Chemical mapping of a 207-nucleotide RNA with 2A3. 2A3 adducts were read by reverse transcription with SuperScript II with manganese. The RNA was probed in 150 mM KOAc, 10 mM MgCl2 and 150 mM bicine (pH 8.5) at 24 C.

RNA sequence: GGGAACGACUCGAGUAGAGUCGAAAAAGUGAGUAUGGCUCGUUACCACGAGCCAUACUCACAACGGUUUUCCUAAAUCGUCGUGAGACGGACCUUGGAAAACCUAGUAUUUAAAUAACUAGGUCAAAUUAGCCUAGAUCCUUCGGGAUCUAGGCAAGUCUCACUGAAUGUUCGCAUUCAGUGAGACAAAAGAAACAACAACAACAAC
Reactivity to 2A3 in 0.01 (KOAc 150mM, MgCl2 10mM, bicine 150mM(pH8.5), 24C), signal-to-noise 1, nucleotides 027 to 156: a000g000u000g000a000g000u000a020u000g000g050c000u040c020g000u140u280a220c110c140a030c040g000a000g000c000c000a020u010a000c010u010c010a000c000a010a010c000g000g000u000u000u000u000c000c020u010a000a000a000u090c010g000u000c010g000u060g110a140g010a020c000g010g000a000c010c000u020u000g000g000a000a000a000a000c000c010u000a010g010u010a060u010u170u050a060a160a120u090a040a020c060u030a020g010g000u000c020a030a030a120u130u130a040g010c000c000u000a010g000a000u010c000c000u030u040c070g050g010g000a000u000c000u010a000g010g000c010a000a000
For 2A3, 707 sequencing reads were counted.